[RMDB]
RNA sequence: GGGAACGACUCGAGUAGAGUCGAAAACAUAUCCUUCGGGAUAUGACCUCCUAAGUCCAAGCAUCGAUCGGAUACCCAGAGCAACAGCUAUCGGAAACGAUAGACAUGCUCUGGAUCCGGGAGCUUGGAUAUGGAAGAUCUGAAUAUUCGUAUUCAGGAUGGACAUCUUUUUCGAAAGAUGUCCAUCAAAAGAAACAACAACAACAAC
Reactivity to DMS in 0.01 (KOAc 150mM, MgCl2 10mM, bicine 150mM(pH8.5), 24C), signal-to-noise 1, nucleotides 027 to 156: c000a040u000a010u000c010c030u000u000c270g080g000g020a000u000a000u010g000a060c000c000u010c000c000u060a090a300g060u030c000c000a000a040g020c000a240u010c130g040a110u000c020g040g000a090u000a120c230c010c000a060g030a000g010c000a040a090c080a200g030c000u010a000u000c000g010g000a280a150a300c030g020a000u000a050g030a090c020a300u000g030c010u030c000u000g020g020a000u030c020c020g000g000g000a010g040c000u000u000g130g020a000u000a030u000g040g010a130a030g000a090u020c010u000g020a050a030u000a020u020u010c210g030u000a070u000u000c000a050g010
Reactivity to 2A3 in 0.01 (KOAc 150mM, MgCl2 10mM, bicine 150mM(pH8.5), 24C), signal-to-noise 3, nucleotides 027 to 156: c010a000u010a000u010c010c000u010u070c300g100g000g000a010u010a010u020g050a040c000c010u010c020c000u050a100a040g020u000c000c000a000a010g000c050a300u210c060g200a120u070c000g020g020a040u100a240c000c030c000a000g000a000g000c010a010a130c020a130g040c010u000a000u010c010g030g070a140a060a070c010g000a000u010a000g050a100c020a060u040g000c000u000c010u000g000g000a000u000c000c000g000g010g000a000g000c000u010u000g020g000a000u000a010u020g000g020a090a100g030a150u060c000u010g020a000a000u070a070u120u220c290g040u060a010u030u000c050a000g040